[RMDB]
Chemical mapping of a 207-nucleotide RNA with DMS and 2A3. The reactions ran in a buffer of 150 mM KOAc, 10 mM MgCl2 and 150 mM bicine (pH 8.5), at 24 C. It was measured as part of the RMDB library OK3TST.
RNA sequence: GGGAACGACUCGAGUAGAGUCGAAAAGGGGUGAUUCAUUGUGUCAGGAAAAGUUGAUGACAACCUUACUGAGGUGGUGACAGCUUAGAUGAGACUCUAAGGACGAGUAGAAAAUAACAGUCCAAAACUCCAUUACACCAAGACAGUGACCAUGAGAGCGGUAGGAUUUAUUCGUAAAUCCUACCGCAAAAGAAACAACAACAACAAC
Reactivity to DMS in 0.01 (KOAc 150mM, MgCl2 10mM, bicine 150mM(pH8.5), 24C), signal-to-noise 1, nucleotides 027 to 156: g010g000g000g050u020g000a100u000u000c010a120u010u020g030u010g030u010c010a090g030g000a070a040a070a030g020u000u010g020a180u030g000a120c060a020a080c010c050u000u000a140c080u000g030a050g040g030u000g000g050u000g010a050c060a180g000c000u000u000a140g020a030u000g050a240g000a100c120u010c040u020a080a170g000g000a050c070g080a080g050u000a170g000a090a050a080a100u020a030a020c110a150g000u000c000c040a020a080a020a140c030u000c000c000a080u010u000a100c050a120c090c000a060a110g000a070c000a030g000u010g000a040c020c050a050u000g000a100g000a220
Reactivity to 2A3 in 0.01 (KOAc 150mM, MgCl2 10mM, bicine 150mM(pH8.5), 24C), signal-to-noise 2, nucleotides 027 to 156: g040g000g010g050u060g050a160u090u040c020a000u020u090g020u000g050u070c040a030g080g000a000a000a070a070g030u060u060g060a140u090g010a040c010a020a070c010c010u080u030a050c090u080g050a030g000g030u030g010g000u030g080a000c000a010g050c020u060u070a020g000a070u050g000a010g030a100c000u020c000u050a030a060g000g050a000c000g000a020g050u130a070g080a040a140a000a000u180a080a050c020a050g020u000c010c000a000a020a050a050c020u010c030c000a020u070u080a040c070a010c040c030a030a000g000a010c030a030g000u000g080a050c000c000a020u100g050a070g020a000
For DMS, 1,593 sequencing reads were counted.